[RMDB]
Chemical mapping of a 177-nucleotide RNA with 2A3 and DMS. For DMS the reverse transcriptase was MarathonRT. Source: RMDB library OK1LIB, as collected in RNAgym. For DMS, 1,470 sequencing reads were counted.
RNA sequence: GGGAACGACUCGAGUAGAGUCGAAAAGAAUAGCCCUAGGAGAACUGUCAGAUCUCAACUCUGUAGGAUGGUCUUGCUUAUCAGAUGGGGCUGGUCCUACCUGAGUACCACUUGGUGCAGGCCUCAACGCCUAAAAUGCUUUCGAGCAUUUUAGGCGAAAAGAAACAACAACAACAAC
Reactivity to 2A3 in 0.01 (KOAc 150mM, MgCl2 10mM, bicine 150mM(pH8.5), 24C), signal-to-noise 3, nucleotides 027 to 126: g170a030a000u100a070g040c010c010c020u070a150g050g070a030g030a080a050c120u050g090u120c110a000g050a160u020c020u020c030a010a160c010u030c020u040g100u120a030g000g120a050u090g020g020u030c000u020u070g030c010u160u150a110u240c010a050g020a300u140g060g000g010g000c020u020g050g020u000c000c010u000a020c000c070u090g050a020g040u040a060c000c000a060c140u080u160g020g000u010g000c020a030g020g030c000c010u050c060a080a040
Reactivity to DMS in 0.01 (KOAc 150mM, MgCl2 10mM, bicine 150mM(pH8.5), 24C), signal-to-noise 1, nucleotides 027 to 126: g010a080a060u070a070g000c000c000c040u000a090g000g000a070g000a020a090c070u000g000u020c060a040g000a090u000c030u000c010a150a080c160u000c070u000g000u000a060g030g010a020u000g040g060u000c010u000u000g000c020u000u000a250u040c170a090g000a010u000g000g010g010g000c000u000g030g060u000c050c000u000a090c050c150u010g000a000g000u040a090c020c100a190c010u050u010g040g020u010g000c140a030g000g020c030c010u050c090a110a090